[RMDB]
RNA sequence: GGGAACGACUCGAGUAGAGUCGAAAAGUGGUCGAGUGCGAAGCACUGGGGUAGAGAAAUAAAAAGAUAGAGAACUACCCCGUCAGUCAGUCACUCUCUGUCUGAAUCUCUCUCUCAAAGACCACGAGGUAAUGCCCUCAUUCGUGAGGGCAUUACCAAAAGAAACAACAACAACAAC
Reactivity to DMS in 0.01 (KOAc 150mM, MgCl2 10mM, bicine 150mM(pH8.5), 24C), signal-to-noise 2, nucleotides 027 to 126: g060u000g000g000u000c010g000a070g000u000g020c010g020a130a180g010c000a000c000u000g000g010g020g000u040a000g000a000g000a020a050a020u010a120a140a120a090a020g000a010u020a000g000a030g030a100a040c040u000a120c100c070c070c070g020u040c090a070g000u000c120a040g000u020c190a050c190u000c040u010c000u010g030u000c000u030g010a080a150u000c030u000c000u000c010u000c000u000c060a060a130a100g000a000c010c000a010c000g040a090
Reactivity to 2A3 in 0.01 (KOAc 150mM, MgCl2 10mM, bicine 150mM(pH8.5), 24C), signal-to-noise 2, nucleotides 027 to 126: g000u000g000g000u010c000g020a000g010u010g000c100g170a170a030g050c060a030c040u020g000g020g060g040u160a000g000a000g000a000a150a000u230a060a130a090a050a000g060a010u110a000g030a000g000a000a010c020u050a020c050c070c000c000g050u010c010a010g000u000c030a020g020u050c070a040c080u020c000u010c000u020g000u010c000u000g040a050a040u050c000u000c000u000c000u030c000u000c020a070a030a050g000a000c000c000a000c000g040a010